[RMDB]
RNA sequence: GGGAACGACUCGAGUAGAGUCGAAAACGCAAGGCGAUCCUGAACGGGGACCAGAUUUACCUGGAGCGGGCGUUCGACGAGGAGGCCCCCGCUGCCGAAUGGGAAGGCGGCUUCGCCUCCCUGACGACCUUGUAGUCCUCUUCGGAGGACUACAAGGAAAAGAAACAACAACAACAAC
Reactivity to 2A3 in 0.01 (KOAc 150mM, MgCl2 10mM, bicine 150mM(pH8.5), 24C), signal-to-noise 1, nucleotides 027 to 126: c030g070c090a040a100g010g010c000g010a040u060c010c020u090g060a170a050c110g010g030g000g040a010c000c000a050g020a120u070u090u170a050c040c000u010g000g010a010g030c010g000g000g000c000g080u040u100c010g060a130c060g150a070g070g010a050g050g000c020c050c000c000c010g000c010u020g030c000c000g000a050a040u100g000g020g030a060a090g040g000c020g100g030c150u290u160c020g000c020c020u030c000c000c030u030g020a000c040g030a020
Reactivity to DMS in 0.01 (KOAc 150mM, MgCl2 10mM, bicine 150mM(pH8.5), 24C), signal-to-noise 2, nucleotides 027 to 126: c080g000c060a130a070g000g030c040g020a020u000c040c020u030g000a080a170c120g000g000g010g030a300c000c000a020g010a130u000u010u030a070c140c060u000g030g000a090g010c000g000g000g000c080g020u010u010c030g010a130c130g020a140g010g000a060g020g000c010c040c020c050c080g010c050u000g020c060c020g030a070a090u010g010g020g010a080a050g010g000c010g020g040c290u010u040c080g000c010c000u000c000c000c000u000g010a220c140g000a100
Structure probing data (2A3 and DMS) for a 177-nucleotide construct. The 2A3 profile rests on 1,016 reads. For 2A3 the reverse transcriptase was SuperScript II with manganese. For DMS the reverse transcriptase was MarathonRT.